[RMDB]
RNA sequence: GGGAACGACUCGAGUAGAGUCGAAAACAAUGUGAUCUGCGAUGGCUGCAAUGGGCCUGUGGUAGGAACCCGCUACAAGUGCAGCGUCUGCCCAGACUACGACUUGUGUAGCGUCUGCGAGGGAAAGUCUUUACCCGCAUUUCGAUGCGGGUAAAGAAAAAGAAACAACAACAACAAC
Reactivity to DMS in 0.01 (KOAc 150mM, MgCl2 10mM, bicine 150mM(pH8.5), 24C), signal-to-noise 2, nucleotides 027 to 126: c100a080a080u020g010u000g000a070u000c060u010g010c080g010a060u000g030g020c000u000g020c090a090a060u000g020g020g020c030c020u000g010u000g010g020u000a040g030g000a090a220c120c060c070g030c140u010a050c140a030a050g030u010g000c050a040g020c210g000u000c000u000g030c070c040c070a130g000a040c020u000a120c090g010a140c050u010u010g040u010g000u020a010g000c020g030u000c060u000g030c070g000a070g010g000g000a130a120a180g010
Reactivity to 2A3 in 0.01 (KOAc 150mM, MgCl2 10mM, bicine 150mM(pH8.5), 24C), signal-to-noise 1, nucleotides 027 to 126: c030a000a160u160g080u160g120a090u010c060u060g080c040g060a030u070g240g130c020u030g000c010a060a160u080g010g000g010c070c060u020g000u110g030g120u040a090g030g010a140a090c000c000c000g040c040u070a050c010a010a190g040u000g150c020a010g000c020g000u030c000u030g050c070c040c040a020g060a030c060u140a040c020g110a030c110u170u100g080u110g030u180a030g070c000g010u000c090u060g010c060g100a120g060g000g020a000a140a000g060